[RMDB]
Chemical mapping of a 177-nucleotide RNA with DMS and 2A3. The reactions ran in a buffer of 150 mM KOAc, 10 mM MgCl2 and 150 mM bicine (pH 8.5), at 24 C. For 2A3, 7,805 sequencing reads were counted. High 2A3 reactivity points to a flexible backbone, as in loops and unpaired stretches. For DMS, 4,390 sequencing reads were counted. The data come from the RNA Mapping Database (RMDB), library TTRDEL.
RNA sequence: GGGAACGACUCGAGUAGAGUCGAAAAGAUAUGGAUAGCGAGGAUCUAUAUGUAGGCCAACAGCUCGGAAACGAGACAUGGCUGAAAUAGGGAGCUAUCCUAAGUCAAACCGCAGUUCGCUGCGGAAGAAAACACAGAAGUUCGCUUCUGUGUUUUCAAAAGAAACAACAACAACAAC
Reactivity to DMS in 0.01 (KOAc 150mM, MgCl2 10mM, bicine 150mM(pH8.5), 24C), signal-to-noise 4, nucleotides 027 to 126: g000a020u000a300u010g000g020a010u000a010g020c010g000a100g020g000a010u020c010u000a010u000a020u010g010u000a120g000g000c000c000a030a070c250a160g010c000u000c000g010g000a090a110a170c010g000a010g000a040c100a140u000g010g010c000u000g010a070a040a020u000a010g000g010g010a030g020c000u000a010u010c000c000u000a010a070g000u000c040a100a100a170c000c000g000c010a010g000u000u010c210g020c010u000g000c000g000g010a030a060
Reactivity to 2A3 in 0.01 (KOAc 150mM, MgCl2 10mM, bicine 150mM(pH8.5), 24C), signal-to-noise 4, nucleotides 027 to 126: g000a000u050a030u140g010g010a010u010a000g010c010g080a300g070g020a010u000c010u010a020u010a030u090g020u000a010g010g000c000c000a050a060c090a180g020c010u000c010g040g030a070a090a070c010g010a010g060a050c040a110u110g000g010c010u000g010a000a030a000u010a010g000g020g010a010g000c000u000a010u000c010c000u000a070a030g020u010c030a080a040a080c000c000g000c000a000g000u070u240c290g050c160u000g000c000g010g000a030a030